Conditions: 150 mM KOAc, 10 mM MgCl2 and 150 mM bicine (pH 8.5), 24 C. This 177-nucleotide RNA was probed chemically with DMS and 2A3. DMS adducts were read by reverse transcription with MarathonRT. The 2A3 profile rests on 10,448 reads. The DMS profile rests on 6,583 reads. Reactivities are given for positions 27 through 126. Reactivities are rounded to 0.1 and cut off at 0 and 3.
RNA sequence: GGGAACGACUCGAGUAGAGUCGAAAACUUGACGCGCCCCAUGCUGAUCCAGCCACAGAUGGAUUGCGGCAACCGUGCGGGCGGGCAGUGGCUCGGCGUUCGGGCGCGGAUCGCAUCCGGCGACCAGUCGUUUUGGAAUUUUCGAAUUCCAAAACGAAAAAGAAACAACAACAACAAC
Reactivity to DMS in 0.01 (KOAc 150mM, MgCl2 10mM, bicine 150mM(pH8.5), 24C), signal-to-noise 4, nucleotides 027 to 126: c070u010u020g000a230c030g020c010g000c000c020c020c220a040u000g020c010u020g000a060u000c040c060a130g010c040c030a040c070a080g020a140u020g030g010a050u080u000g020c080g020g040c020a100a060c040c040g020u010g020c100g020g000g020c030g000g000g000c040a080g010u000g010g000c050u000c010g010g010c030g030u010u020c280g020g000g000c040g010c010g020g000a040u010c060g030c040a170u010c040c090g000g000c000g010a060c050c050a110g000
Reactivity to 2A3 in 0.01 (KOAc 150mM, MgCl2 10mM, bicine 150mM(pH8.5), 24C), signal-to-noise 8, nucleotides 027 to 126: c020u060u150g070a040c020g000c010g000c020c000c000c000a040u080g010c010u030g010a050u010c020c010a010g050c010c020a100c020a050g110a150u160g070g050a090u090u170g130c040g030g000c020a030a060c070c030g070u110g080c060g020g090g030c060g010g030g000c040a100g060u080g110g000c010u010c020g010g000c010g010u080u110c040g010g000g000c010g000c000g010g010a010u010c010g000c020a030u040c030c030g040g000c000g030a040c020c000a030g080